Structure probing data (2A3 and DMS) for a 177-nucleotide construct. High DMS reactivity at an A or C suggests that its Watson-Crick edge is free. Conditions: 150 mM KOAc, 10 mM MgCl2 and 150 mM bicine (pH 8.5), 24 C. It was measured as part of the RMDB library TTRINS.

[RMDB]
RNA sequence: GGGAACGACUCGAGUAGAGUCGAAAAGAUAUGGAAGGAUCUACGCUGAUAUGUGCAAGCGACGAAGAACCUCGGAAACGAGGUUCAGAGCUUGCACAUAUCAGACCCGUAUCUCCUUCCUAAGUCACAUAUAUAAUCAGUUCGCUGAUUAUAUAUGAAAAGAAACAACAACAACAAC
Reactivity to 2A3 in 0.01 (KOAc 150mM, MgCl2 10mM, bicine 150mM(pH8.5), 24C), signal-to-noise 2, nucleotides 027 to 126: g030a040u070a060u200g000g010a000a010g020g000a000u010c010u030a000c020g020c050u010g000a000u020a010u020g000u000g000c000a020a000g020c010g300a300c050g010a120a090g010a000a020c000c000u010c010g020g000a080a080a050c010g010a000g000g050u000u000c000a000g000a000g000c000u000u000g000c000a000c010a000u000a000u000c000a000g000a000c010c010c000g000u000a000u010c040u020c010c000u000u040c010c000u020a200a050g050u030c010a010
Reactivity to DMS in 0.01 (KOAc 150mM, MgCl2 10mM, bicine 150mM(pH8.5), 24C), signal-to-noise 7, nucleotides 027 to 126: g010a050u000a300u000g000g010a040a020g010g000a020u000c210u000a020c010g000c010u010g000a010u000a000u000g020u000g010c010a010a000g010c000g000a160c300g010a100a110g000a010a000c000c000u000c000g000g000a120a130a250c000g010a010g000g010u000u000c000a010g000a120g000c000u000u000g000c000a000c000a000u000a000u000c000a000g000a050c270c300c110g010u000a010u000c150u000c000c000u000u000c000c000u010a030a110g010u000c050a290